[RMDB]
RNA sequence: GGGAACGACUCGAGUAGAGUCGAAAACGUCGAGGGAAUCGCCACAUCCCUCGUCGCCGACUUCGACCAGCGGUUCGGCUGCUACACCACCACCGAAUUCCGUGACGUCGACACGAGCCGAGGCGACAUUCCGUGGCGGAUCUACGACCUCCAGGACCAUGAAGGCGGUUUUCGAACCGCCUUCAUGAAAAGAAACAACAACAACAAC
Reactivity to 2A3 in 0.01 (KOAc 150mM, MgCl2 10mM, bicine 150mM(pH8.5), 24C), signal-to-noise 1, nucleotides 027 to 156: c050g010u010c000g010a070g080g060g050a000a140u100c010g000c010c000a010c010a020u030c030c000c000u000c000g010u020c010g040c030c010g090a190c110u010u020c000g000a000c000c010a020g000c000g000g000u000u000c000g020g020c090u010g000c010u120a060c080a220c090c010a010c010c000a000c020c000g030a020a030u290u080c010c000g000u030g010a040c080g000u010c000g010a010c010a020c090g020a030g000c040c000g040a010g090g000c100g000a080c020a080u300u130c100c070g000u000g000g020c000g000g000a030u040c020u010a020c040g050a050c000c030u000c000c050a050g110g110a050c100